[RMDB]
An RNA of 177 nucleotides, treated with 2A3 and DMS and read out base by base.
RNA sequence: GGGAACGACUCGAGUAGAGUCGAAAAAGACUGCCUGGUAGUCUACGGACUACCAGGCAGUCAAGGUCUGACAGUCUAUCUUCCUAUGCUACUGUAAACCUUGGAACAUAGUCUAUCGGACCUGGAACAAGCUUAAGUAUUUCGAUACUUAAGCUUGAAAAGAAACAACAACAACAAC
Reactivity to 2A3 in 0.01 (KOAc 150mM, MgCl2 10mM, bicine 150mM(pH8.5), 24C), signal-to-noise 6, nucleotides 027 to 126: a000g020a000c000u000g010c000c000u000g000g000u000a000g010u000c010u040a080c300g060g000a000c000u010a000c020c000a000g000g000c000a000g000u000c000a000a010g000g000u000c000u000g010a000c010a010g000u000c000u000a000u000c030u010u010c000c000u050a060u150g080c030u060a210c080u230g130u300a090a130a130c020c020u020u050g010g000a010a000c000a010u000a010g000u000c000u010a020u010c000g000g010a000c000c000u010g030g000a080a030
Reactivity to DMS in 0.01 (KOAc 150mM, MgCl2 10mM, bicine 150mM(pH8.5), 24C), signal-to-noise 4, nucleotides 027 to 126: a060g010a020c000u000g050c000c000u020g010g050u010a000g040u000c010u000a100c210g010g020a030c000u000a020c020c010a000g010g050c040a000g010u000c000a020a010g010g010u010c000u000g000a010c040a000g000u000c000u000a000u000c200u000u000c000c000u000a040u000g010c100u030a100c280u030g010u020a100a100a100c130c060u010u000g010g000a000a010c120a010u000a010g010u000c000u000a060u000c000g010g000a000c010c000u010g000g010a100a190

Conditions: 150 mM KOAc, 10 mM MgCl2 and 150 mM bicine (pH 8.5), 24 C.
Values cover nucleotides 27 to 126.